[RMDB]
RNA sequence: GGGAACGACUCGAGUAGAGUCGAAAACGUCAAUAUCUUUUUCACAUCGGUCGCUUCAUGUUGAAUCUACAUCGAAAGGUUCGCCAUUUCGUCAAAACUACCCUCCCACACUACAAUUUCAUCCUCACUGCGGAUAAUGUAGAUUUGAACGGAAUUCAUCCACCAUACUGUUCGCAGUAUGGUGGAUAAAAGAAACAACAACAACAAC
Reactivity to DMS in 0.01 (KOAc 150mM, MgCl2 10mM, bicine 150mM(pH8.5), 24C), signal-to-noise 1, nucleotides 027 to 156: c070g030u000c080a070a120u000a080u000c020u020u000u010u000u000c040a110c050a080u000c080g040g000u010c030g050c070u000u020c040a080u010g030u020u000g010a040a100u010c020u010a030c040a070u000c070g010a100a100a100g010g020u000u000c040g000c070c070a100u010u010u000c020g040u000c060a050a100a050a070c030u000a110c000c090c070u000c020c020c000a020c060a050c040u010a080c120a060a200u010u000u000c100a060u000c040c010u010c050a080c060u030g000c050g010g010a110u000a010a110u010g010u000a030g000a130u000u000u000g010a070a120c040g020g010a050a280u010u000c070
Reactivity to 2A3 in 0.01 (KOAc 150mM, MgCl2 10mM, bicine 150mM(pH8.5), 24C), signal-to-noise 2, nucleotides 027 to 156: c020g070u030c050a080a120u090a200u220c050u040u150u040u110u090c100a080c030a080u100c100g080g000u050c010g050c110u070u060c110a090u090g060u050u050g100a020a000u000c000u020a030c020a160u030c090g020a010a020a060g080g000u020u040c040g020c010c020a040u030u010u010c030g000u020c040a070a060a230a210c130u100a090c000c000c020u020c000c020c000a000c000a010c020u050a020c000a000a000u030u130u060c040a000u050c000c010u050c020a120c100u110g000c050g020g000a000u050a010a040u140g000u010a010g030a050u000u020u060g030a060a000c010g020g070a020a040u040u070c030
The record gives the reactivity of an RNA of 207 nucleotides to DMS and 2A3. The reactions ran in a buffer of 150 mM KOAc, 10 mM MgCl2 and 150 mM bicine (pH 8.5), at 24 C. For DMS, 2,110 sequencing reads were counted. For 2A3 the reverse transcriptase was SuperScript II with manganese.